[RMDB]
RNA sequence: GGGAACGACUCGAGUAGAGUCGAAAAGGUGUCGAUGCCUAUGACAGACAAACCUGGGGCCGUGCACCGCAGGCUGAAGUCUUAACACCGGGCUAUAAGUACAAUCUGACCGAUAUUAACGCCGCGACCGAGCGCGGGUAUUCGUACCCGCGCUCGGAAAAGAAACAACAACAACAAC
Reactivity to 2A3 in 0.01 (KOAc 150mM, MgCl2 10mM, bicine 150mM(pH8.5), 24C), signal-to-noise 1, nucleotides 027 to 126: g110g000u000g040u080c050g000a110u280g000c010c000u060a040u220g070a010c050a110g100a000c020a000a220a000c000c000u080g000g010g000g000c000c130g040u230g040c140a050c030c050g240c000a030g010g000c120u300g000a060a000g050u000c000u000u130a050a000c020a000c000c000g000g000g000c030u030a000u100a300a040g030u110a200c060a000a110u140c060u000g040a070c010c150g000a000u010a080u230u220a000a130c060g000c000c000g000c110g000a050